[RMDB]
RNA sequence: GGGAACGACUCGAGUAGAGUCGAAAAUGGGGGGGCAUUUUCCUCCCAGGUGACACAGGUCAGGUGCAGGGAGAUGCAAUCCAUAUCAAGCAGUUGCAGGAGUCUUUCUGGCUUAAAAUAUUUCUACCCCACAGGUGGCAAUAUCUCUUGUAACAAACAAAAUGGAUCGAUUCGUCGAUCCAUUUUGAAAAGAAACAACAACAACAAC
Reactivity to DMS in 0.01 (KOAc 150mM, MgCl2 10mM, bicine 150mM(pH8.5), 24C), signal-to-noise 1, nucleotides 027 to 156: u000g010g020g020g010g050g010g020c180a070u000u010u000u000c000c000u010c010c000c030a060g010g010u000g000a090c030a140c050a150g000g000u000c020a110g010g030u010g010c040a070g030g020g000a070g010a080u010g010c010a150a100u010c000c000a100u000a150u000c090a060a140g010c070a110g010u000u000g040c030a040g030g010a100g000u000c000u000u000u000c060u010g000g010c030u000u000a080a090a100a130u000a040u000u000u000c040u000a070c030c010c000c100a120c150a120g030g010u000g030g000c010a020a070u000a030u000c030u000c000u020u000g000u000a040a080c090a110a100a240
Reactivity to 2A3 in 0.01 (KOAc 150mM, MgCl2 10mM, bicine 150mM(pH8.5), 24C), signal-to-noise 1, nucleotides 027 to 156: u050g000g010g000g000g000g000g000c030a020u070u070u000u020c010c000u030c030c000c000a000g000g050u130g010a030c030a030c030a120g160g000u060c020a040g000g000u040g000c040a030g000g010g000a020g000a000u060g000c000a020a080u060c020c010a080u130a060u270c010a070a020g140c050a040g030u020u020g050c000a000g000g030a020g010u030c060u030u140u010c130u090g030g000c000u020u040a060a130a060a000u080a020u000u040u010c010u020a010c000c000c030c050a110c030a110g040g000u040g000g000c040a050a000u040a040u030c060u020c000u030u010g020u040a020a040c000a040a060a040
Record summary:
An RNA of 207 nucleotides, treated with DMS and 2A3 and read out base by base. Values cover nucleotides 27 to 156. Source: RMDB library OK3TST, as collected in RNAgym. 2A3 adducts were read by reverse transcription with SuperScript II with manganese.